RNA sequence: GGGAACGACUCGAGUAGAGUCGAAAACUGGGGAUCUCAACAGGCCCCGGGUGGCCAACCAGGUCGUGGACGCGUUGUGCAGGUGCGUGAUGUCCAGCUCCGUCGUCGGGUGCCGCCGGGCCCCAACUCCCCUUGGGAGAUUCGUCUCCCAAGGGGAAAAAGAAACAACAACAACAAC
Reactivity to 2A3 in 0.01 (KOAc 150mM, MgCl2 10mM, bicine 150mM(pH8.5), 24C), signal-to-noise 3, nucleotides 027 to 126: c010u020g010g000g000g060a130u030c050u020c090a120a110c020a110g000g030c000c000c020c060g000g000g030u040g020g010c040c010a040a100c060c060a070g000g020u090c060g080u110g040g020a040c070g010c030g060u090u020g090u100g030c070a040g010g110u110g060c060g010u080g090a090u170g070u060c000c000a030g000c040u040c030c010g110u140c020g020u030c030g010g000g050u160g040c000c020g050c040c000g050g000g000c000c030c000c000a020a040c050
Reactivity to DMS in 0.01 (KOAc 150mM, MgCl2 10mM, bicine 150mM(pH8.5), 24C), signal-to-noise 1, nucleotides 027 to 126: c100u000g000g000g000g000a080u010c000u000c080a220a090c150a120g000g070c070c060c010c000g050g010g020u120g010g020c020c020a110a260c120c040a080g000g020u020c040g000u000g000g000a080c100g000c100g040u030u000g000u000g000c020a000g000g010u000g000c000g060u010g000a030u010g000u050c010c010a140g020c000u000c060c090g000u020c050g030u020c060g000g010g010u010g000c000c080g000c050c120g030g000g000c060c000c000c070a070a140c120
The record gives the reactivity of an RNA of 177 nucleotides to 2A3 and DMS. It was measured as part of the RMDB library OK1LIB. For DMS the reverse transcriptase was MarathonRT.